[RMDB]
RNA sequence: GGGAACGACUCGAGUAGAGUCGAAAAAAUGUUCAUGUAAAGUAUUUCAGAAAUAUUACUAGCCAUAGUUUACUGAACUCAUAACAUAUGCCACCCCUGAGUGCAGGCGUUUACCUAUAUCAUCUCCUUUAAUCAUCAUGGCAACCUCUGAGCUGCACAUACUGAGGCAUUUCGAUGCCUCAGUAUGAAAAGAAACAACAACAACAAC
Reactivity to DMS in 0.01 (KOAc 150mM, MgCl2 10mM, bicine 150mM(pH8.5), 24C), signal-to-noise 1, nucleotides 027 to 156: a050a090u000g040u030u020c080a060u040g000u000a080a060a100g010u000a060u010u000u000c100a130g030a070a080a160u010a090u010u000a110c070u000a150g040c070c030a080u000a020g070u000u000u000a020c030u010g030a010a030c060u000c110a090u000a060a100c060a090u010a040u000g020c050c010a120c040c000c000c000u010g000a120g030u010g000c030a090g020g060c050g000u000u000u000a030c020c020u000a110u010a070u030c070a070u000c030u010c030c000u000u000u000a100a070u000c070a080u000c060a080u000g000g000c040a030a020c020c010u010c130u010g020a070g040c020u000g000c060a170
Reactivity to 2A3 in 0.01 (KOAc 150mM, MgCl2 10mM, bicine 150mM(pH8.5), 24C), signal-to-noise 2, nucleotides 027 to 156: a000a010u090g010u020u070c070a030u060g000u060a000a030a120g010u040a110u020u050u070c040a070g120a070a180a010u170a040u230u090a050c050u040a060g110c030c030a070u050a040g000u020u070u040a040c010u020g060a080a030c010u040c050a030u110a160a020c020a060u070a080u190g050c010c000a050c000c020c010c010u020g070a020g000u060g040c060a050g000g040c060g030u070u040u140a040c000c000u060a070u070a040u200c030a020u070c020u020c000c040u040u100u090a050a020u080c060a020u020c020a040u070g060g000c020a020a000c000c000u110c080u050g010a020g010c040u030g000c040a000
This 207-nucleotide RNA was probed chemically with DMS and 2A3. DMS adducts were read by reverse transcription with MarathonRT. The reactions ran in a buffer of 150 mM KOAc, 10 mM MgCl2 and 150 mM bicine (pH 8.5), at 24 C. 2A3 adducts were read by reverse transcription with SuperScript II with manganese. High 2A3 reactivity points to a flexible backbone, as in loops and unpaired stretches. Source: RMDB library OK3TST, as collected in RNAgym. DMS (dimethyl sulfate) methylates the pairing face of unpaired adenines and cytosines.